Chemical mapping of a 207-nucleotide RNA with 2A3 and DMS. It was measured as part of the RMDB library M2RFPK. For 2A3 the reverse transcriptase was SuperScript II with manganese. For DMS the reverse transcriptase was MarathonRT. Reactivities are given for positions 27 through 156. Conditions: 150 mM KOAc, 10 mM MgCl2 and 150 mM bicine (pH 8.5), 24 C. Values are in units of 0.01, from 0 to 300, in steps of 10.
RNA sequence: GGGAACGACUCGAGUAGAGUCGAAAAAUGAGAUCCCAUCUUGCACACUGUGUUAAUUUGAGAUUCUCAUGCCUCCUACUUGGAGAGAUCUGGACUAGAAGUCAGGGCAUCUGACUCUGCCAGCCACAAAACGUACAAGGCUUCGGCCUUGUACGAACAAAUUUUUAUACUUCGGUAUAAAAAUUUGAAAAGAAACAACAACAACAAC
Reactivity to 2A3 in 0.01 (KOAc 150mM, MgCl2 10mM, bicine 150mM(pH8.5), 24C), signal-to-noise 4, nucleotides 027 to 156: a000u010g000a010g010a010u000c000c000c000a010u010c010u010u010g000c010a040c060a100c190u250g040u000g010u130u300a060a060u020u020u000g010a020g010a050u300u040c010u000c010a010u030g020c000c020u010c000c010u080a200c130u100u240g030g020a060g000a010g000a100u050c000u010g000g060a100c040u090a100g010a170a010g060u010c010a010g030g070g200c080a130u100c100u010g000a000c000u010c000u000g000c000c000a030g040c030c010a060c020a030a130a110a020c010g010u000a000c000a000a020g000g030c000u040u110c180g050g000c000c000u020u000g000u000a000c000g000a000a000
Reactivity to DMS in 0.01 (KOAc 150mM, MgCl2 10mM, bicine 150mM(pH8.5), 24C), signal-to-noise 1, nucleotides 027 to 156: a030u000g000a030g010a050u000c000c010c000a050u000c060u000u000g030c030a010c020a250c090u000g040u000g000u010u020a010a010u000u000u000g010a030g000a060u000u010c010u000c000a040u000g030c050c030u010c000c010u010a060c160u000u000g020g020a130g000a140g000a090u000c010u000g020g010a070c030u000a070g000a120a050g000u000c030a030g010g020g020c250a120u010c020u000g000a040c000u000c030u000g000c000c010a040g010c100c020a070c030a130a050a090a170c020g010u000a000c000a020a000g000g040c000u000u010c300g040g040c000c000u000u020g010u000a010c010g000a020a100